[RMDB]
RNA sequence: GGGAACGACUCGAGUAGAGUCGAAAACGCCGUAGUUACGACUACGGCGAAUAAAAUCAGCGGUAAGCUGGCGUAAAAUAUUACCGCUGAACGCCAGCUUAAAGCUCAGCACUACGGUGCUGAGCAAACGACGAGGGAGUUUCGACUCCCUCGUCGUAAAAGAAACAACAACAACAAC
Reactivity to 2A3 in 0.01 (KOAc 150mM, MgCl2 10mM, bicine 150mM(pH8.5), 24C), signal-to-noise 1, nucleotides 027 to 126: c000g050c000c000g000u000a020g000u030u220a180c300g010a000c170u000a000c000g000g000c000g050a000a000u020a000a100a000a070u070c080a000g070c000g000g270u210a010a000g000c000u000g010g000c000g000u040a000a210a140a070u260a100u300u080a050c000c000g020c050u050g100a010a010c000g030c020c000a000g010c050u000u020a020a000a000g000c000u000c030a000g040c000a000c000u000a040c110g160g000u000g000c000u000g000a000g000c000a000a000